[RMDB]
RNA sequence: GGGAACGACUCGAGUAGAGUCGAAAAGAUAUGGAGUUACGGGAGCGAUGAAGGGCGAUGAAAUAUUAGGAUCGGAAACGAUCCUAAUAUGGAGCCUGGAGGUCGCAUCGAUCGUAACUCCUAAGUCCGAUGUCUUAUAGUUCGCUAUAAGACAUCGAAAAGAAACAACAACAACAAC
Reactivity to DMS in 0.01 (KOAc 150mM, MgCl2 10mM, bicine 150mM(pH8.5), 24C), signal-to-noise 6, nucleotides 027 to 126: g010a090u010a300u010g010g010a020g010u000u000a000c010g030g000g000a060g010c000g010a010u000g000a300a190g000g000g010c010g010a150u020g000a160a090a010u000a000u000u000a020g000g000a010u000c010g010g010a070a100a230c010g000a000u000c000c000u000a000a000u000a000u000g000g000a090g010c000c010u000g010g010a250g010g010u000c000g020c010a160u010c100g000a080u020c000g000u000a000a010c000u000c000c000u000a010a090g010u000c050
Reactivity to 2A3 in 0.01 (KOAc 150mM, MgCl2 10mM, bicine 150mM(pH8.5), 24C), signal-to-noise 3, nucleotides 027 to 126: g070a020u130a110u210g000g020a020g000u000u010a000c010g030g060g020a050g050c000g000a030u180g040a080a050g020g000g020c030g160a290u050g030a050a030a000u020a000u010u010a010g000g000a000u010c010g040g020a070a060a040c000g010a000u000c000c000u000a000a000u000a000u000g000g020a010g000c010c010u010g000g010a040g080g160u020c010g030c020a070u020c020g020a090u150c000g000u000a000a010c000u000c000c000u000a030a000g010u000c020